[RMDB]
RNA sequence: GGGAACGACUCGAGUAGAGUCGAAAAGACGUGGAGGUGUCGCGCCCUCCUUUGCGCGUAAGUACGUCGAAAUUCGGUGCUUUGGAUCGCACCGUAUGAUCCAUUAGAUAUCCGCUGUGUGCCGCGGUUGGGCAUUUACACUUACCCGAAAGGGGAACAUAUGGUAUUACUUCGGUAAUACCAUAUGAAAAGAAACAACAACAACAAC
Reactivity to DMS in 0.01 (KOAc 150mM, MgCl2 10mM, bicine 150mM(pH8.5), 24C), signal-to-noise 3, nucleotides 027 to 156: g010a080c060g030u000g000g010a040g010g040u000g020u000c160g000c050g010c130c030c010u000c020c010u000u000u000g030c030g060c060g020u000a110a100g030u010a070c040g010u000c030g010a060a120a200u010u000c030g030g020u010g000c010u000u000u000g030g030a090u000c200g010c030a160c010c060g010u010a030u010g010a110u000c000c020a130u010u000a080g010a130u000a080u000c020c040g020c030u010g020u010g020u000g020c030c050g030c040g020g000u000u000g020g010g020c040a080u000u000u010a110c090a050c080u020u010a140c000c010c010g010a040a070a210g010g000g020g020a070a140
Reactivity to 2A3 in 0.01 (KOAc 150mM, MgCl2 10mM, bicine 150mM(pH8.5), 24C), signal-to-noise 4, nucleotides 027 to 156: g050a000c040g030u050g020g040a040g000g050u040g010u080c030g010c010g030c030c010c020u100c010c020u080u070u070g040c050g000c020g030u060a080a030g040u060a040c010g020u010c020g030a020a050a050u090u090c010g000g010u000g000c010u080u140u230g110g030a080u120c050g000c010a030c000c000g000u000a040u050g030a040u020c010c010a050u080u090a050g070a100u050a050u110c040c050g000c070u050g020u020g010u040g110c020c010g030c050g020g000u040u100g020g000g010c010a010u020u060u120a040c030a000c030u060u110a070c000c030c010g030a070a030a030g010g000g010g010a040a000